[RMDB]
The data come from the RNA Mapping Database (RMDB), library OK1LIB. Structure probing data (DMS and 2A3) for a 177-nucleotide construct. The DMS profile rests on 16,312 reads. The reactions ran in a buffer of 150 mM KOAc, 10 mM MgCl2 and 150 mM bicine (pH 8.5), at 24 C. For 2A3, 18,048 sequencing reads were counted. DMS adducts were read by reverse transcription with MarathonRT.
RNA sequence: GGGAACGACUCGAGUAGAGUCGAAAAGGAUGAGUUUUUUUUCUCAUCCAAGUUCUCGAAGGAAGGCGAAUGACACCACGUCAUCCAACGCGAGAAGGUGUCGACGCACGAGAGCAGCGUCAAAGAAGGGUACCUUGUAGUUCGCUACGAGGUACCCAAAAGAAACAACAACAACAAC
Reactivity to DMS in 0.01 (KOAc 150mM, MgCl2 10mM, bicine 150mM(pH8.5), 24C), signal-to-noise 6, nucleotides 027 to 126: g000g000a000u010g010a010g000u000u000u000u020u030u020u010u020c000u000c000a000u000c000c000a050a050g020u000u000c000u010c000g020a120a090g000g000a030a020g000g010c010g010a050a020u010g000a010c020a010c010c000a170c040g020u010c030a070u000c040c050a110a090c210g000c140g010a080g010a140a060g020g040u000g000u000c000g000a070c000g000c010a180c090g010a150g000a060g030c120a070g010c010g010u010c010a110a080a060g010a140a140
Reactivity to 2A3 in 0.01 (KOAc 150mM, MgCl2 10mM, bicine 150mM(pH8.5), 24C), signal-to-noise 9, nucleotides 027 to 126: g010g000a010u010g030a040g030u010u020u010u010u010u020u200u080c000u000c000a000u000c000c000a000a000g010u000u000c000u000c010g030a100a030g060g010a040a040g020g000c010g010a050a040u060g000a010c000a000c010c010a010c010g020u010c010a050u030c010c020a170a130c100g060c150g100a080g040a170a100g030g000u010g000u020c020g000a000c000g030c020a040c100g080a070g020a010g040c100a010g000c000g010u020c030a100a070a080g140a100a100